Source information:
Chemical mapping of a 177-nucleotide RNA with 2A3 and DMS. DMS adducts were read by reverse transcription with MarathonRT.

RNA sequence: GGGAACGACUCGAGUAGAGUCGAAAAUUGGCAUGAUGAGGAAACCUUACGUUUAUCUGAUCUAUUUGAUGAUAAAUUCCUCCUACUCAUUCUGAAAAAUCUAUUUGAGACUUCGGUCUCAAAUAGACAACUAUUAUUACUUCGGUAAUAAUAGUUGAAAAGAAACAACAACAACAAC
Reactivity to 2A3 in 0.01 (KOAc 150mM, MgCl2 10mM, bicine 150mM(pH8.5), 24C), signal-to-noise 5, nucleotides 027 to 126: u070u050g040g000c040a020u040g010a040u050g010a030g000g020a040a090a090c040c020u120u120a080c120g030u020u010u010a020u000c010u040g070a020u010c030u090a280u240u190u150g020a020u010g000a000u010a010a030a010u060u040c010c010u010c000c010u030a060c010u010c000a010u080u000c040u050g040a080a040a020a020a090u000c000u000a000u000u000u010g010a000g000a000c000u030u070c230g060g000u010c000u000c000a000a000a000u000a000g000a000
Reactivity to DMS in 0.01 (KOAc 150mM, MgCl2 10mM, bicine 150mM(pH8.5), 24C), signal-to-noise 5, nucleotides 027 to 126: u010u010g010g010c110a070u010g010a050u000g010a030g000g000a070a120a120c170c090u010u010a100c250g010u000u000u000a010u010c000u010g000a200u000c140u010a140u010u010u000g000a110u000g000a020u000a000a010a070u000u000c070c030u000c090c120u000a160c080u000c010a030u000u000c090u010g010a040a090a060a100a180u000c000u000a010u000u000u000g010a010g000a010c000u000u010c180g030g020u000c000u000c000a000a000a000u000a000g000a040
The reactions ran in a buffer of 150 mM KOAc, 10 mM MgCl2 and 150 mM bicine (pH 8.5), at 24 C.